About this RNA
This 207-nucleotide RNA was probed chemically with 2A3 and DMS. For DMS, 9,784 sequencing reads were counted. DMS adducts were read by reverse transcription with MarathonRT. The data come from the RNA Mapping Database (RMDB), library OK3TST. Conditions: 150 mM KOAc, 10 mM MgCl2 and 150 mM bicine (pH 8.5), 24 C. Values cover nucleotides 27 to 156.
RNA sequence: GGGAACGACUCGAGUAGAGUCGAAAACGCGAGGUACCACGGCGAUGAUCGGUCUCCUGUCCGCUAUCACCAGAGAACCUAGCAGGUCCGGUAGGAUCUGUUCGUAUCCGGUACCUACCAGCACGUGGAAGAGUGCUACGUGUGCGCAGAUAGCACGCAUAAUUAAGCCGUUCGCGGCUUAAUUAUGAAAAGAAACAACAACAACAAC
Reactivity to 2A3 in 0.01 (KOAc 150mM, MgCl2 10mM, bicine 150mM(pH8.5), 24C), signal-to-noise 9, nucleotides 027 to 156: c060g010c010g020a020g010g000u010a000c000c030a080c180g090g010c130g100a130u110g030a040u150c070g000g020u030c060u020c060c020u040g020u040c040c150g000c020u020a020u030c010a010c030c020a010g010a000g000a080a050c010c000u010a020g020c010a000g010g010u000c010c010g030g170u180a130g090g000a000u000c000u020g010u030u040c030g040u110a050u050c020c030g000g000u000a000c000c000u010a070c010c010a000g000c000a000c010g010u030g030g060a100a070g100a080g150u160g090c000u010a010c020g000u010g020u020g020c030g000c030a030g020a040u010a010g010c010a010c040g050
Reactivity to DMS in 0.01 (KOAc 150mM, MgCl2 10mM, bicine 150mM(pH8.5), 24C), signal-to-noise 4, nucleotides 027 to 156: c020g050c050g000a080g030g050u000a040c020c020a130c070g030g020c050g030a100u010g010a110u000c080g020g010u010c010u000c050c040u000g010u000c040c070g020c030u000a040u000c010a190c070c040a120g000a130g010a060a110c010c020u010a100g030c020a020g020g010u000c000c000g000g040u010a130g020g000a010u000c020u000g020u000u000c040g010u000a120u010c020c020g000g010u000a020c000c000u010a070c040c030a300g010c010a040c040g000u000g000g000a140a160g020a170g010u010g030c000u000a030c030g010u000g010u020g000c070g040c050a130g000a080u000a070g030c020a070c050g000